RNA sequence: GGGAACGACUCGAGUAGAGUCGAAAAGACUAGACUUGCGCCGGUCAAUGUCGAUGUGCCUGAUGAUGUGCUGGUGCUGCGUGUUAUCGGUCCGCUCUUUUUCGCCGCGGCGGAAGGGCUGUUUACCGAUACGCACGACGUUCGCGUCGUGCGUAUCAAAAGAAACAACAACAACAAC
Reactivity to 2A3 in 0.01 (KOAc 150mM, MgCl2 10mM, bicine 150mM(pH8.5), 24C), signal-to-noise 2, nucleotides 027 to 126: g010a000c090u100a000g010a010c000u020u050g040c020g020c050c020g010g000u050c050a020a060u140g030u030c030g000a050u040g130u140g100c000c030u070g010a080u050g000a050u030g060u070g040c050u070g000g050u040g020c040u010g020c060g000u030g020u040u060a030u030c000g010g050u000c010c020g000c010u040c000u030u110u020u090u080c000g000c040c000g020c080g140g000c000g000g010a010a010g000g010g010c030u030g040u010u140u070a030c020c000
Reactivity to DMS in 0.01 (KOAc 150mM, MgCl2 10mM, bicine 150mM(pH8.5), 24C), signal-to-noise 1, nucleotides 027 to 126: g020a000c000u000a240g030a000c040u000u010g000c040g000c030c010g020g000u000c010a070a050u020g000u000c000g000a050u000g050u050g000c160c020u000g000a020u010g000a050u010g000u000g030c160u010g010g020u000g020c080u000g000c040g020u030g000u000u000a080u000c010g010g000u020c140c200g000c020u000c000u020u010u000u030u020c060g010c080c010g000c300g020g050c060g000g020a000a000g010g000g000c030u000g030u000u050u020a070c080c040
Annotation
Chemical mapping of a 177-nucleotide RNA with 2A3 and DMS. Source: RMDB library OK1LIB, as collected in RNAgym. The reactions ran in a buffer of 150 mM KOAc, 10 mM MgCl2 and 150 mM bicine (pH 8.5), at 24 C. Reactivities are given for positions 27 through 126.